[RMDB]
RNA sequence: GGGAACGACUCGAGUAGAGUCGAAAAGUGCGCACCGUACUUGUGGACCUCGAUGCCGGUCUGUGGCUCGGCUUCGGAAUAGGCAUUGCCCCCGAUGUGCGGGCGCCGCUCGAGGACGAGCACGCGCCUCGCGAGUGCAGUUCGCUGCACUCGCGAGAAAAGAAACAACAACAACAAC
Reactivity to 2A3 in 0.01 (KOAc 150mM, MgCl2 10mM, bicine 150mM(pH8.5), 24C), signal-to-noise 2, nucleotides 027 to 126: g140u120g020c020g000c020a160c210c020g070u110a080c020u080u030g080u220g110g020a030c010c030u020c080g070a040u100g030c010c010g000g010u040c060u050g180u180g060g030c020u050c120g110g040c000u080u020c010g060g000a090a140u100a180g040g000c070a240u060u300g010c010c030c000c010c010g050a090u110g020u140g070c030g000g000g020c010g000c000c000g000c000u000c020g020a060g000g100a070c020g010a010g000c030a030c040g020c020g020c000
Reactivity to DMS in 0.01 (KOAc 150mM, MgCl2 10mM, bicine 150mM(pH8.5), 24C), signal-to-noise 2, nucleotides 027 to 126: g060u010g020c000g010c080a160c150c100g020u010a040c050u000u010g020u000g040g010a130c040c150u000c030g000a010u010g010c060c070g010g000u000c090u020g060u000g010g020c010u020c080g000g000c000u000u000c020g010g020a080a120u020a100g000g000c020a110u000u000g010c060c000c030c010c000g010a040u020g010u010g010c060g010g010g010c000g000c000c020g010c000u000c020g000a140g010g000a140c010g020a030g010c030a070c050g020c090g010c030

This 177-nucleotide RNA was probed chemically with 2A3 and DMS. Values cover nucleotides 27 to 126. For DMS the reverse transcriptase was MarathonRT. The RNA was probed in 150 mM KOAc, 10 mM MgCl2 and 150 mM bicine (pH 8.5) at 24 C. Source: RMDB library OK2TST, as collected in RNAgym.